[RMDB]
RNA sequence: GGGAACGACUCGAGUAGAGUCGAAAAGGAGUGCAACGAGCGCAGUUGGAGCAGCGCACGGGCUUGACGUGGCCGCGGCCGUUCUUGUUGCGACCGCUGUAAAGAAAGAACAAUGAACGUCAGUAUGACGACUUUAGCUGUUCGCAGCUAAAGUCGUAAAAGAAACAACAACAACAAC
Reactivity to DMS in 0.01 (KOAc 150mM, MgCl2 10mM, bicine 150mM(pH8.5), 24C), signal-to-noise 2, nucleotides 027 to 126: g020g000a100g050u000g020c060a060a060c030g010a070g030c050g000c060a020g020u010u000g020g000a140g020c040a020g030c050g020c070a090c090g000g010g020c060u010u010g010a100c160g040u000g010g010c050c000g000c010g010g030c010c040g010u000u010c040u010u020g010u020u010g010c020g000a010c000c060g010c000u000g060u000a040a110a090g010a100a080a120g000a120a060c090a090a080u010g020a080a060c070g000u010c050a130g020u010a110u000g020
Reactivity to 2A3 in 0.01 (KOAc 150mM, MgCl2 10mM, bicine 150mM(pH8.5), 24C), signal-to-noise 1, nucleotides 027 to 126: g040g010a040g060u090g000c020a050a000c050g050a000g000c000g000c040a050g000u090u090g070g020a030g030c060a030g020c050g040c070a020c070g000g020g070c080u050u070g080a050c030g050u100g020g010c030c000g030c020g030g000c050c000g030u060u060c040u060u170g080u060u000g000c010g010a000c000c040g000c020u010g030u090a140a110a050g110a060a110a000g080a000a030c100a080a100u210g030a050a000c030g030u030c010a020g070u140a150u160g000

An RNA of 177 nucleotides, treated with DMS and 2A3 and read out base by base. Conditions: 150 mM KOAc, 10 mM MgCl2 and 150 mM bicine (pH 8.5), 24 C. Reactivities are given for positions 27 through 126. DMS adducts were read by reverse transcription with MarathonRT. It was measured as part of the RMDB library OK2TST. The DMS profile rests on 1,639 reads.